Structure probing data (DMS) for a 177-nucleotide construct. The reactions ran in a buffer of 150 mM KOAc, 10 mM MgCl2 and 150 mM bicine (pH 8.5), at 24 C.
RNA sequence: GGGAACGACUCGAGUAGAGUCGAAAAGUCGAACGAUGAAGCCCUUCGGGGUGGAUUAGUGGCGAACGGGUGAGUAACACGUGGGCAAUCUGCCCUUCACUCUGGGACAAGCCCUGGAAACGGGGUCCGGACAACUCUCAUUCGUGAGAGUUGUCCGAAAAGAAACAACAACAACAAC
Reactivity to DMS in 0.01 (KOAc 150mM, MgCl2 10mM, bicine 150mM(pH8.5), 24C), signal-to-noise 1, nucleotides 027 to 126: g010u000c000g010a110a040c010g010a000u010g000a300a300g010c010c010c010u000u020c150g010g000g000g030u000g030g010a060u000u000a020g010u000g000g000c010g000a020a100c070g000g000g000u000g000a080g030u000a030a160c260a070c160g010u030g020g030g010c000a160a110u010c120u000g010c020c000c000u000u000c030a020c010u010c010u000g030g000g010a080c080a120a150g020c000c010c010u010g040g000a100a050a190c010g030g000g030g020u000c150
For DMS, 830 sequencing reads were counted.